[RMDB]
RNA sequence: GGGAACGACUCGAGUAGAGUCGAAAAAUUGGAAUGAGUGCAUCCCAAACCCAUGGGCGAGGACCCAUUGGAGGGCAAGUCUGGUGCCAGCAGCCGCGGUAAUUCCAGCUCCAAUAGCGUAUGCUAACGUUGCUGCAGUUAAAAAGCUCGUAGUUGGGGUACCUGUUAAGUUCGCUUAACAGGUACCAAAAGAAACAACAACAACAAC
Reactivity to 2A3 in 0.01 (KOAc 150mM, MgCl2 10mM, bicine 150mM(pH8.5), 24C), signal-to-noise 1, nucleotides 027 to 156: a000u110u110g070g020a050a010u050g010a010g050u100g050c010a050u060c030c000c000a060a110a140c010c030c000a000u010g000g010g000c070g040a180g060g060a130c000c000c030a090u060u050g010g010a100g020g070g000c000a010a010g040u000c050u030g000g020u010g050c020c030a000g000c000a000g020c050c050g000c010g000g010u020a000a010u070u000c010c010a010g010c090u030c020c020a020a100u050a090g010c050g070u160a030u290g020c040u020a010a010c010g000u000u000g000c000u000g020c000a020g000u020u030a130a180a050a020a000g030c030u050c090g060u090a120g000u010u010g000g000
Annotation:
The record gives the reactivity of an RNA of 207 nucleotides to 2A3. Conditions: 150 mM KOAc, 10 mM MgCl2 and 150 mM bicine (pH 8.5), 24 C. It was measured as part of the RMDB library PDB130. The 2A3 profile rests on 579 reads.